Conditions: 150 mM KOAc, 10 mM MgCl2 and 150 mM bicine (pH 8.5), 24 C. Chemical mapping of a 207-nucleotide RNA with 2A3. For 2A3, 520 sequencing reads were counted. For 2A3 the reverse transcriptase was SuperScript II with manganese.
[RMDB]
RNA sequence: GGGAACGACUCGAGUAGAGUCGAAAAGUCUCACAAGGGUUUAGAGUCUAUAGCAUUGAUGGCAAGUCGUCGUCACUCAGUGCGAACGGCGGUGGCAUUGGAGCAAAGACGGGUCUCUAUAAGACGGCAUCCACCGUACGACGACUGACUCCCGUAGCUUGUCCAGUGUUUUCGAACACUGGACAAGAAAAGAAACAACAACAACAAC
Reactivity to 2A3 in 0.01 (KOAc 150mM, MgCl2 10mM, bicine 150mM(pH8.5), 24C), signal-to-noise 1, nucleotides 027 to 156: g020u020c010u070c020a030c050a040a160g050g000g110u130u170u180a160g030a040g010u000c120u120a050u050a030g000c010a020u040u000g020a030u050g030g000c020a130a040g100u130c080g010u110c030g050u040c070a060c060u080c020a090g000u000g020c030g010a020a000c050g000g000c000g000g000u000g020g020c060a070u000u160g070g010a050g060c010a030a030a100g070a080c110g000g090g170u110c070u020c000u110a060u110a200a110g050a000c000g070g060c040a010u070c080c000a000c000c010g000u020a000c000g000a000c080g000a020c030u000g050a050c020u010c000c000c000g000u050a110g010